[RMDB]
RNA sequence: GGGAACGACUCGAGUAGAGUCGAAAAAAAAAGAGCGUAAUCGCGUCAUUGAGUGACGUGAAGAUCAUCCAAGUGUGCUGUCUACUGUCGUAGAUAGCGCACAAUACGCUGAUGAUCAUUCAAAAAACUUAUAAGCCGGAUUCGUCCGGCUUAUAAGAAAAGAAACAACAACAACAAC
Reactivity to DMS in 0.01 (KOAc 150mM, MgCl2 10mM, bicine 150mM(pH8.5), 24C), signal-to-noise 1, nucleotides 027 to 126: a070a040a000a060a040g000a060g040c020g030u000a100a060u010c010g010c010g000u000c000a040u010u000g000a070g000u000g020a020c000g000u000g000a050a040g020a010u000c040a000u000c010c090a140a160g020u000g010u000g000c000u000g000u000c010u000a000c000u000g010u000c210g010u000a000g010a000u000a010g030c000g050c000a010c000a030a040u000a240c080g000c040u000g030a040u000g000a010u000c000a150u000u000c050a000a040a100a120a070a080